Annotation: Source: RMDB library TTRDEL, as collected in RNAgym. Structure probing data (DMS) for a 177-nucleotide construct. The RNA was probed in 150 mM KOAc, 10 mM MgCl2 and 150 mM bicine (pH 8.5) at 24 C. DMS adducts were read by reverse transcription with MarathonRT. Reactivities are given for positions 27 through 126.
RNA sequence: GGGAACGACUCGAGUAGAGUCGAAAAGAUAUGGACCCAGGGAGUCGGGUCCUUCGGAAACGAAGGGCGCCUAGCGACGAGGAUCUGGUGUCCUAAGUCAAAACUCAAGGGGUUCGCCCCUUGAGAACAAGACAUCAUCCUUCGGGAUGAUGUCUUGAAAAGAAACAACAACAACAAC
Reactivity to DMS in 0.01 (KOAc 150mM, MgCl2 10mM, bicine 150mM(pH8.5), 24C), signal-to-noise 1, nucleotides 027 to 126: g010a060u010a260u010g010g000a000c020c000c010a030g010g030g010a080g010u000c000g010g020g020u000c000c000u010u010c010g000g000a080a060a140c020g030a010a020g010g010g020c020g010c110c110u010a100g010c090g000a050c030g010a070g010g020a070u020c020u000g010g000u010g010u000c000c000u000a010a070g020u010c050a120a020a110a160c000u000c010a010a010g000g010g000g070u000u020c270g000c020c000c010c010u000u000g020a000g000a060a090